[RMDB]
RNA sequence: GGGAACGACUCGAGUAGAGUCGAAAAGAUAUGGAUGCCUUUGGGAGCUCACCACAGUAUACCCUAAUGUCGGAAACGACAUUAGGGUAUACUGUGGAGAGCUUUGAUCAAAGGGCAUCCUAAGUCAGUGUAAAGAAAACUUCGGUUUUCUUUACACAAAAGAAACAACAACAACAAC
Reactivity to DMS in 0.01 (KOAc 150mM, MgCl2 10mM, bicine 150mM(pH8.5), 24C), signal-to-noise 1, nucleotides 027 to 126: g000a030u010a300u020g010g010a010u000g020c000c010u000u000u000g010g000g000a010g010c010u000c010a070c000c000a000c010a010g030u000a000u010a000c000c000c000u030a000a030u000g020u010c010g040g000a140a080a280c000g050a000c010a000u000u000a000g000g000g000u000a000u000a000c000u010g050u000g000g000a020g020a010g020c000u010u010u010g010a140u000c100a020a010a010g020g000g010c000a000u020c000c000u000a030a090g000u000c040a120

This 177-nucleotide RNA was probed chemically with DMS. DMS adducts were read by reverse transcription with MarathonRT. The RNA was probed in 150 mM KOAc, 10 mM MgCl2 and 150 mM bicine (pH 8.5) at 24 C. For DMS, 1,788 sequencing reads were counted. The data come from the RNA Mapping Database (RMDB), library TTRINS.